[RMDB]
Source information:
The record gives the reactivity of an RNA of 177 nucleotides to DMS. The RNA was probed in 150 mM KOAc, 10 mM MgCl2 and 150 mM bicine (pH 8.5) at 24 C. DMS adducts were read by reverse transcription with MarathonRT.

RNA sequence: GGGAACGACUCGAGUAGAGUCGAAAAGAUAUGGAUCCUGGUAGAUAGCCAUUGGGACAUGCUGCUACAUUCGGAAACGAAUGGUCAGCAACAGCCCAAUGGCUAUCUACCACAUGGAUCCUAAGUCGAAACAGAUCAAGUUCGCUUGAUCUGUUUCAAAAGAAACAACAACAACAAC
Reactivity to DMS in 0.01 (KOAc 150mM, MgCl2 10mM, bicine 150mM(pH8.5), 24C), signal-to-noise 2, nucleotides 027 to 126: g000a120u010a300u020g000g000a000u010c000c000u000g020g040u010a010g000a000u000a000g000c000c000a000u020u000g000g000g000a070c090a150u000g010c000u000g000c000u010a100c000a010u000u010c000g000g000a130a110a240c010g000a020a000u000g020g030u010c180a010g020c000a010a030c030a090g010c000c010c010a000a000u000g000g000c000u000a000u000c000u000a000c000c000a020c230a020u000g010g010a030u000c000c000u000a010a150g020u010c090